The record gives the reactivity of an RNA of 207 nucleotides to DMS and 2A3. For 2A3, 767 sequencing reads were counted. High 2A3 reactivity points to a flexible backbone, as in loops and unpaired stretches.
[RMDB]
RNA sequence: GGGAACGACUCGAGUAGAGUCGAAAACAGCUAACGCCAUGAUGUCGUUGAGUUGCAAGCAUUGCGUGUGGGAGAAAACGAUUUUCCCCUCAUAUCACGGCUCGAUGGCCAAAGCCCGCAAAGAGAUUCAAAACUUGCAACAGGAAGCUAAAGAGCAACCGUUCACUUUUUUCGAAAAGUGAACGGUAAAAGAAACAACAACAACAAC
Reactivity to DMS in 0.01 (KOAc 150mM, MgCl2 10mM, bicine 150mM(pH8.5), 24C), signal-to-noise 1, nucleotides 027 to 156: c040a110g080c010u010a050a170c170g000c030c000a080u000g020a150u020g020u000c000g020u040u000g000a190g030u000u000g020c020a040a080g000c030a140u010u000g000c020g010u000g030u010g000g000g030a010g000a020a030a090a200c230g020a300u000u020u030u010c000c000c000c000u010c050a090u000a120u000c060a060c020g010g010c000u000c010g000a180u000g030g000c010c050a110a150a300g010c020c020c030g040c140a090a080a220g010a100g020a170u000u000c090a090a090a170a090c040u000u000g030c000a030a060c060a110g010g000a080a070g000c040u000a060a020a120g000a160g010c010a200
Reactivity to 2A3 in 0.01 (KOAc 150mM, MgCl2 10mM, bicine 150mM(pH8.5), 24C), signal-to-noise 2, nucleotides 027 to 156: c010a000g000c000u060a080a030c060g010c010c020a080u070g010a050u190g010u020c010g050u050u160g040a060g050u090u130g020c010a010a020g110c060a100u060u260g020c050g010u040g020u060g000g020g000a230g010a100a010a030a040c210g060a090u110u000u010u000c000c030c020c000u010c010a090u130a050u060c030a010c030g000g000c000u000c030g150a060u050g080g000c000c000a080a080a050g010c030c000c000g000c050a030a140a070g040a010g000a050u120u130c030a070a050a100a080c020u030u010g040c020a070a030c010a050g000g060a050a000g000c040u050a150a010a020g060a020g000c010a020